RNA sequence: GGGAACGACUCGAGUAGAGUCGAAAAAUGAACGUGGUGGGCGUAAGUUAGUAGAAGAUCUAAUGGUACGCGGUGGGUUUUCGACUGUACUCGAAACCACCACCACCACCAUGUCGUUCCCACCGAACUUUAGCUUGUCAUUCGUGACAAGCUAAAGAAAAGAAACAACAACAACAAC
Reactivity to DMS in 0.01 (KOAc 150mM, MgCl2 10mM, bicine 150mM(pH8.5), 24C), signal-to-noise 2, nucleotides 027 to 126: a070u000g010a090a030c050g030u000g000g010u010g010g000g000c010g000u000a150a250g020u000u000a020g000u000a090g020a160a170g000a160u030c000u000a020a010u000g000g020u010a010c030g020c030g020g070u000g000g000g000u000u000u000u000c000g010a030c050u000g010u010a040c140u000c010g000a030a030a050c040c030a030c000c000a100c140c120a120c030c030a000c000c030a020u000g020u000c000g000u000u000c010c000c000a070c170c130g010a120a120
Reactivity to 2A3 in 0.01 (KOAc 150mM, MgCl2 10mM, bicine 150mM(pH8.5), 24C), signal-to-noise 3, nucleotides 027 to 126: a000u210g010a050a000c000g010u010g000g000u010g030g010g000c010g000u020a070a030g000u010u020a010g000u020a010g080a300a040g020a070u040c000u020a020a000u050g200g020u030a000c000g000c000g010g000u010g020g020g020u040u020u020u080c020g000a020c030u160g090u180a060c040u000c020g000a010a020a020c000c020a040c020c010a010c000c010a010c010c000a000c000c000a030u050g010u000c000g000u000u000c010c000c010a010c030c050g050a020a050
Source: RMDB library M2PK90, as collected in RNAgym. The record gives the reactivity of an RNA of 177 nucleotides to DMS and 2A3. For 2A3, 3,674 sequencing reads were counted. Conditions: 150 mM KOAc, 10 mM MgCl2 and 150 mM bicine (pH 8.5), 24 C. DMS adducts were read by reverse transcription with MarathonRT. Values cover nucleotides 27 to 126. The DMS profile rests on 1,872 reads.